[RMDB]
RNA sequence: GGGAACGACUCGAGUAGAGUCGAAAACGAUAGCUGUUCGCAGCUAUCGAAAGGAGUACCCGUCAGGGUUAAGGCCAUACGGACAGCCGGGUCCAAUGCCGAAAAGAGGGUUGUUCGCAACCCUCAAUCAUGCGGAAAGCUUCGGCUUUCCGCAUGAAAAAGAAACAACAACAACAAC
Reactivity to DMS in 0.01 (KOAc 150mM, MgCl2 10mM, bicine 150mM(pH8.5), 24C), signal-to-noise 1, nucleotides 027 to 126: c020g000a000u000a000g000c000u000g000u020u020c300g000c030a000g010c000u000a000u000c000g000a020a110a060g040g000a190g010u030a090c000c000c010g010u000c210a060g010g020g000u000u000a050a080g000g020c070c060a160u000a190c080g020g000a060c070a130g010c050c050g010g000g000u000c020c010a150a130u000g010c000c120g050a130a040a070a110g000a000g020g000g000u000u000g000u000u020c170g050c020a000a020c000c000c030u000c000a030a040
Structure probing data (DMS) for a 177-nucleotide construct. Source: RMDB library M2PK50, as collected in RNAgym. Conditions: 150 mM KOAc, 10 mM MgCl2 and 150 mM bicine (pH 8.5), 24 C. The DMS profile rests on 616 reads. DMS adducts were read by reverse transcription with MarathonRT.